[RMDB]
RNA sequence: GGGAACGACUCGAGUAGAGUCGAAAAGGGGUCAAUCCAUCGAUCGAGAGUAGUUCUUUGAUCUAUACUGAAGCCUCCACGGUAUAGGGAGAACUACCUCGGGAGGAUUGACGGAGGCACCCAAACACCGGAACCAUGUUCGCAUGGUUCCGGUGAACGUUAAUUCACCGUUCGCGGUGAAUUAACGAAAAGAAACAACAACAACAAC
Reactivity to 2A3 in 0.01 (KOAc 150mM, MgCl2 10mM, bicine 150mM(pH8.5), 24C), signal-to-noise 2, nucleotides 027 to 156: g020g020g100g020u040c010a010a010u020c020c010a120u300c030g000a020u000c000g000a000g000a010g010u000a000g000u000u010c000u300u120u020g010a010u000c000u010a000u000a010c000u030g050a110a010g000c010c000u030c010c010a000c020g000g030u010a000u000a000g000g000g010a020g000a000a000c010u000a000c000c000u010c010g000g000g000a020g000g010a000u010u000g000a030c000g000g010a010g010g030c010a030c010c000c010a010a060a010c000a000c000c010g000g010a010a000c000c000a010u020g030u060u090c300g020c200a000u000g020g000u000u000c000c010g010g000u010g000a000a000
Chemical mapping of a 207-nucleotide RNA with 2A3. It was measured as part of the RMDB library RNAMAK. The 2A3 profile rests on 3,091 reads. Reactivities are given for positions 27 through 156.